[RMDB]
RNA sequence: GGGAACGACUCGAGUAGAGUCGAAAACAAGGGUAGUUCGCUACCCUUGAAAUUCUAGACGCUAGAAAACGAUCAAAACUAGCGACUAGAAAAACGAUCGAAAAACUCAAUUCUUCGGAAUUGAGAACCAUAAGGUUCAGUUCGCUGAACCUUAUGGAAAAGAAACAACAACAACAAC
Reactivity to DMS in 0.01 (KOAc 150mM, MgCl2 10mM, bicine 150mM(pH8.5), 24C), signal-to-noise 1, nucleotides 027 to 126: c010a000a010g000g030g030u000a040g040u000u020c300g040c000u010a010c000c000c000u010u000g030a030a090a090u000u000c020u010a020g030a170c000g010c000u030a010g010a050a030a260a220c120g000a140u020c090a070a090a080a120c000u000a000g010c010g020a090c000u070a040g000a010a000a050a070a110c160g000a090u000c130g000a010a040a080a130a280c000u000c010a000a020u000u000c000u000u000c150g000g000a070a010u000u000g000a000g000a040a130
Reactivity to 2A3 in 0.01 (KOAc 150mM, MgCl2 10mM, bicine 150mM(pH8.5), 24C), signal-to-noise 1, nucleotides 027 to 126: c020a020a000g020g000g010u020a000g020u030u030c050g000c090u000a000c000c000c000u010u000g000a000a010a000u010u020c000u000a000g000a000c000g000c040u010a010g080a130a240a040a070c090g090a220u250c100a150a100a000a070c000u000a000g000c010g010a010c010u000a000g000a040a010a010a000a000c050g020a070u210c140g050a030a020a100a120a120c000u010c000a010a010u020u000c000u060u080c200g110g010a000a000u000u000g000a000g000a000a020